[RMDB]
Background:
Chemical mapping of a 177-nucleotide RNA with DMS and 2A3. For 2A3 the reverse transcriptase was SuperScript II with manganese. In probing experiments dimethyl sulfate is read out at A N1 and C N3, which are open when not base-paired. It was measured as part of the RMDB library OK1LIB. Conditions: 150 mM KOAc, 10 mM MgCl2 and 150 mM bicine (pH 8.5), 24 C. Reactivities are given for positions 27 through 126.
RNA sequence: GGGAACGACUCGAGUAGAGUCGAAAACGGGGUACGAGGGAUUGCUUAAGAACUAAGGUUAAGCAGUUAAAUACCCAUAGACGACCUAAGAUAUAAGGACAGAGAUCCUUAUGUCCCUCGUUGUCAAGGUACUCGGUGAUUUCGAUCAUUGAGUACCAAAAGAAACAACAACAACAAC
Reactivity to DMS in 0.01 (KOAc 150mM, MgCl2 10mM, bicine 150mM(pH8.5), 24C), signal-to-noise 9, nucleotides 027 to 126: c090g010g010g010g020u010a020c100g010a100g010g010g020a020u010u000g020c000u000u000a010a040g020a110a150c240u040a140a130g020g010u000u000a010a010g000c000a010g010u010u000a060a100a130u010a070c020c000c010a070u030a070g000a060c050g000a050c010c030u010a120a110g000a010u000a010u000a000a000g010g000a020c010a250g020a160g000a150u000c010c000u000u000a000u000g000u000c000c040c040u020c230g010u000u000g000u010c050a100a090
Reactivity to 2A3 in 0.01 (KOAc 150mM, MgCl2 10mM, bicine 150mM(pH8.5), 24C), signal-to-noise 9, nucleotides 027 to 126: c050g010g000g000g010u050a020c040g020a060g010g070g010a010u010u010g000c000u030u010a030a040g080a200a110c140u150a160a060g200g020u020u000a000a000g000c000a000g000u010u020a020a040a020u100a040c000c000c010a010u090a020g080a020c050g020a030c000c010u020a030a010g000a000u010a000u000a000a000g010g000a010c040a040g260a050g040a300u000c000c000u000u000a000u000g000u000c010c000c000u030c030g010u010u040g080u050c050a050a040
For 2A3, 74,496 sequencing reads were counted.